[RMDB]
RNA sequence: GGGAACGACUCGAGUAGAGUCGAAAAUCACGGUAAACAAAACCUUUGCUUUCCUGUCUUCCUUAAGACAGAAGGGUUAUCAUUAAGAUAACCGCAGGUGCAGGUCCUGAAAUCGUGAUGAGGCAUGCAUGGUGUUGUCGUUCGCGACAACACCAUGAAAAGAAACAACAACAACAAC
Reactivity to DMS in 0.01 (KOAc 150mM, MgCl2 10mM, bicine 150mM(pH8.5), 24C), signal-to-noise 1, nucleotides 027 to 126: u000c000a000c000g010g010u000a000a130a220c290a010a000a020a040c000c010u000u010u010g050c010u000u010u000c050c010u000g000u000c000u000u000c300c120u000u040a010a010g000a010c000a020g000a170a130g010g000g000u000u000a000u010c000a140u000u030a150a130g010a000u000a000a000c000c000g010c040a000g000g010u010g010c040a020g000g000u020c000c000u000g000a090a010a000u000c000g050u000g000a020u000g000a060g000g000c050a080u000g000
Reactivity to 2A3 in 0.01 (KOAc 150mM, MgCl2 10mM, bicine 150mM(pH8.5), 24C), signal-to-noise 1, nucleotides 027 to 126: u000c000a000c010g000g050u040a010a000a000c000a020a040a000a020c010c000u060u090u240g050c040u100u160u170c000c000u000g000u000c050u000u050c030c030u160u300a020a000g000a000c000a030g050a090a060g000g020g000u010u000a000u000c040a070u210u300a190a100g000a000u000a000a000c020c020g000c020a000g000g000u000g000c030a030g000g040u090c010c010u010g020a010a010a000u010c000g010u000g000a000u030g040a060g040g100c100a040u150g000